[RMDB]
RNA sequence: GGGAACGACUCGAGUAGAGUCGAAAAGAUAGUCCCAACAGGCAGGGGGCCUCUUGUAGGAUAAGCCACUCUGUCCUCCUGCGGGUACUCACAUUGGGGUAAGGGUGGUCUGGGAUUUCGACAGACCCUCUUUUAAUGCCUUCGGGCAUUAAAAGAGAAAAGAAACAACAACAACAAC
Reactivity to 2A3 in 0.01 (KOAc 150mM, MgCl2 10mM, bicine 150mM(pH8.5), 24C), signal-to-noise 1, nucleotides 027 to 126: g040a010u170a020g120u050c040c000c000a000a060c050a020g020g040c000a000g040g000g010g000g000c010c010u040c020u110u140g100u170a110g000g030a080u050a150a040g120c030c010a170c010u050c030u030g070u060c000c020u000c000c010u040g020c030g000g000g040u060a080c040u050c070a090c020a150u070u160g040g020g000g030u040a090a000g080g020g050u100g010g000u020c020u010g020g020g000a060u070u100u050c020g030a010c000a010g040a020c000c000
Reactivity to DMS in 0.01 (KOAc 150mM, MgCl2 10mM, bicine 150mM(pH8.5), 24C), signal-to-noise 3, nucleotides 027 to 126: g010a160u010a110g010u000c010c000c000a140a110c240a090g000g010c020a010g010g000g000g010g000c040c050u000c050u010u010g020u020a080g030g000a190u010a110a150g000c020c020a050c020u010c020u000g020u000c000c000u010c010c030u000g010c050g010g000g010u010a040c070u000c060a110c140a120u010u010g020g000g010g010u000a050a040g010g000g020u010g020g010u010c020u000g010g010g000a160u000u000u010c040g010a070c080a040g010a080c020c030

This 177-nucleotide RNA was probed chemically with 2A3 and DMS. For DMS, 3,145 sequencing reads were counted. 2A3 adducts were read by reverse transcription with SuperScript II with manganese. For DMS the reverse transcriptase was MarathonRT. Conditions: 150 mM KOAc, 10 mM MgCl2 and 150 mM bicine (pH 8.5), 24 C. The data come from the RNA Mapping Database (RMDB), library OK2TRN.